[RMDB]
RNA sequence: GGGAACGACUCGAGUAGAGUCGAAAAGCAAAGCCCACCUGGCCCCUCGGCCCUCAGCCGCCGAGUUUCCCUCCUGCAGUGGGAGGUUUCCCACGACUGGAGGGAAGCAGUGGCUAUUCCAGUAGUACCAGUGAUCUUCUUUCGAGAAGAUCACUGGAAAAGAAACAACAACAACAAC
Reactivity to DMS in 0.01 (KOAc 150mM, MgCl2 10mM, bicine 150mM(pH8.5), 24C), signal-to-noise 1, nucleotides 027 to 126: g020c090a050a110a180g030c070c000c040a150c130c070u010g000g000c010c060c010c020u000c070g040g080c060c020c090u020c150a090g000c100c120g010c000c100g000a090g000u000u000u000c020c020c000u000c010c020u000g030c300a120g040u000g000g050g010a010g020g020u000u010u010c000c000c000a000c020g000a100c030u000g000g020a030g020g000g000a000a000g010c040a030g000u010g000g040c030u000a100u000u000c020c040a150g000u000a090g000u010a120